[RMDB]
RNA sequence: GGGAACGACUCGAGUAGAGUCGAAAAGAAGGGUGAAAGCCCUUGAUACUGUAGUGGAAAUUAUAAAUAAGAAGAGUUCUGAGUUGCUUAAGCAGAACUAAAAUAAAAAGACAGGCAUUAUUACAAACAUGGCGAGGUAAGUUCGCUUACCUCGCAACCUAACUUUCACGUUCGCGUGAAAGUUAGGAAAAGAAACAACAACAACAAC
Reactivity to 2A3 in 0.01 (KOAc 150mM, MgCl2 10mM, bicine 150mM(pH8.5), 24C), signal-to-noise 2, nucleotides 027 to 156: g020a010a020g020g030g000u070g040a110a000a010g000c010c000c040u020u010g030a050u060a060c090u110g030u160a030g010u050g040g030a020a060a000u160u120a050u220a170a050a030u230a050a040g030a040a010g010a010g050u010u010c000u000g030a040g050u130u100g080c070u080u050a090a000g030c010a000g010a000a010c030u030a000a030a000a000u070a000a100a000a000a010g020a000c030a020g010g000c010a010u010u070a020u100u070a120c070a100a080a010c050a090u100g040g030c010g000a000g020g000u000a000a000g010u020u060c160g000c080u010u000a000c000c000u000c000g010c000a000a000